The record gives the reactivity of an RNA of 177 nucleotides to 2A3 and DMS. The DMS profile rests on 2,414 reads. Conditions: 150 mM KOAc, 10 mM MgCl2 and 150 mM bicine (pH 8.5), 24 C. Values cover nucleotides 27 to 126. The data come from the RNA Mapping Database (RMDB), library OK2TRN. High 2A3 reactivity points to a flexible backbone, as in loops and unpaired stretches. DMS adducts were read by reverse transcription with MarathonRT. The 2A3 profile rests on 1,365 reads. For 2A3 the reverse transcriptase was SuperScript II with manganese.

RNA sequence: GGGAACGACUCGAGUAGAGUCGAAAAGUGUCAGGGGCCAGCUGUGAGCAGGGUGACCCCAGACCUGUCGUGUCCCUACUGGAGCACAGUCCGUGGUGACAAGCCCCGCCUGCCCCCAGAUAGAGGGUGACGUAGCUAGUUUCGACUAGCUACGUCAAAAAGAAACAACAACAACAAC
Reactivity to 2A3 in 0.01 (KOAc 150mM, MgCl2 10mM, bicine 150mM(pH8.5), 24C), signal-to-noise 1, nucleotides 027 to 126: g130u080g020u040c050a050g030g010g030g030c030c000a020g050c060u050g030u070g130a080g080c030a000g010g100g100u050g050a050c000c000c010c010a000g020a030c000c010u020g000u000c020g020u010g140u030c010c030c000u000a030c040u010g030g010a030g040c050a010c010a180g030u000c030c000g070u020g010g010u040g010a050c030a050a020g030c010c020c000c010g070c000c010u060g000c030c000c020c000c000a000g060a020u100a020g150a040g040g000g000
Reactivity to DMS in 0.01 (KOAc 150mM, MgCl2 10mM, bicine 150mM(pH8.5), 24C), signal-to-noise 2, nucleotides 027 to 126: g000u010g030u000c010a060g030g000g010g020c040c020a070g010c040u010g010u020g020a160g010c090a150g010g030g010u000g000a080c020c000c010c020a090g020a030c010c020u000g010u010c110g030u010g010u000c000c030c000u010a090c080u010g020g000a120g000c130a100c100a090g010u000c050c030g000u000g010g000u000g010a070c080a070a140g000c030c010c030c020g000c100c030u010g020c130c010c000c000c030a120g000a080u010a080g000a080g000g010g010